[RMDB]
RNA sequence: GGGAACGACUCGAGUAGAGUCGAAAACCCUCACGGUGCGUGGCGUUUCCUCUCGCCCCAAUUAUGCGCAGGCGCGCAUCACCGAAGUGUUACCGCCCACGCAUUCCCGCGCGCGCCCAUUCGGCACCCGGGGUCUUCUAUUCGUAGAAGACCCCGGAAAAGAAACAACAACAACAAC
Reactivity to 2A3 in 0.01 (KOAc 150mM, MgCl2 10mM, bicine 150mM(pH8.5), 24C), signal-to-noise 1, nucleotides 027 to 126: c000c000c000u040c000a080c090g000g000u050g060c050g010u040g050g000c020g030u000u100u100c030c000u050c030u000c010g040c000c000c000c000a060a030u100u030a050u120g000c000g010c010a010g120g050c030g020c020g000c030a000u040c030a010c010c010g080a130a000g040u100g020u060u050a050c010c050g060c010c000c000a000c000g030c030a040u050u020c030c000c000g010c000g000c000g000c000g000c000c000c000a050u100u100c010g050g060c050a110c000